[RMDB]
Conditions: 150 mM KOAc, 10 mM MgCl2 and 150 mM bicine (pH 8.5), 24 C. An RNA of 177 nucleotides, treated with DMS and 2A3 and read out base by base. For 2A3 the reverse transcriptase was SuperScript II with manganese. Reactivities are given for positions 27 through 126.

RNA sequence: GGGAACGACUCGAGUAGAGUCGAAAAGAUAUGGACUGAACUACUGAACCAAGUGCGUUGAAACGUUACUCAAAUUCGGAAACGAAUUUGAGUAACGUGGAGCAUCAAAGUCAGCAGUCCUAAGUCACUAAACUAAAAGGUUCGCCUUUUAGUUUAGAAAAGAAACAACAACAACAAC
Reactivity to DMS in 0.01 (KOAc 150mM, MgCl2 10mM, bicine 150mM(pH8.5), 24C), signal-to-noise 8, nucleotides 027 to 126: g010a080u000a300u000g010g010a010c010u000g010a070a030c050u020a300c000u000g010a030a030c020c050a160a300g010u000g000c010g020u000u020g000a190a140a020c000g000u000u000a000c010u000c000a000a000a010u000u000c000g020g000a130a090a220c010g010a010a000u000u000u000g000a020g010u000a000a010c000g010u000g000g010a100g010c000a000u000c060a050a170a260g000u000c010a000g000c000a010g010u000c010c010u000a040a110g010u010c030a280
Reactivity to 2A3 in 0.01 (KOAc 150mM, MgCl2 10mM, bicine 150mM(pH8.5), 24C), signal-to-noise 4, nucleotides 027 to 126: g020a020u110a050u210g000g030a000c020u010g000a150a040c060u200a050c010u300g030a120a040c050c030a200a120g020u000g000c030g200u300u040g020a040a020a000c000g000u000u000a000c000u000c000a000a010a010u020u000c000g050g000a080a080a070c010g000a000a020u000u010u010g000a000g000u000a000a000c000g000u000g000g000a000g000c000a000u170c090a110a070a010g030u010c010a010g010c000a000g000u000c000c010u030a220a000g050u010c000a010